[RMDB]
This 207-nucleotide RNA was probed chemically with DMS and 2A3. The data come from the RNA Mapping Database (RMDB), library OK3TST.

RNA sequence: GGGAACGACUCGAGUAGAGUCGAAAAGUAAGGCGCGGGCUGCAAGACAGCAGCCCAUUGUCUUGAAGCAGGGUUCUGGAGGAGACACGGUGCCCAUCACCUGCCCUUUCUUUGUCCCAGAGCAGAGGAGGGAAAUGACGAAUCUCAGCGCAGCAGCUAUCAGUAUCUGAUUCGUCAGAUACUGAUAAAAAGAAACAACAACAACAAC
Reactivity to DMS in 0.01 (KOAc 150mM, MgCl2 10mM, bicine 150mM(pH8.5), 24C), signal-to-noise 3, nucleotides 027 to 156: g000u000a040a040g040g070c020g050c080g010g020g060c020u010g060c020a110a150g030a180c240a140g010c030a070g000c020c010c010a020u000u010g030u010c030u000u000g000a080a120g030c040a080g010g030g010u000u000c040u010g000g010a150g000g000a110g020a080c020a040c020g010g040u010g030c010c020c080a070u000c020a060c010c010u000g000c030c000c010u000u000u000c030u000u010u000g010u000c030c030c170a190g010a150g000c030a060g000a080g020g000a080g020g000g000a050a040a060u000g010a090c040g000a060a090u000c030u000c030a070g020c030g030c030a130g010c050a120g010c060
Reactivity to 2A3 in 0.01 (KOAc 150mM, MgCl2 10mM, bicine 150mM(pH8.5), 24C), signal-to-noise 5, nucleotides 027 to 156: g060u040a010a010g020g000c040g000c050g040g010g000c010u020g000c020a050a070g110a080c090a030g010c000a000g000c010c000c010a030u060u070g000u000c010u010u060g020a060a010g030c050a030g040g000g000u060u050c010u070g040g020a040g010g030a050g020a030c030a010c090g020g030u070g020c000c030c000a030u090c020a020c000c010u030g030c000c000c010u020u070u090c030u020u030u040g030u040c030c050c060a030g020a010g000c030a000g000a000g010g010a010g010g010g020a010a070a060u180g020a010c050g030a040a100u030c030u020c040a020g010c010g000c030a070g000c020a000g020c030
The RNA was probed in 150 mM KOAc, 10 mM MgCl2 and 150 mM bicine (pH 8.5) at 24 C.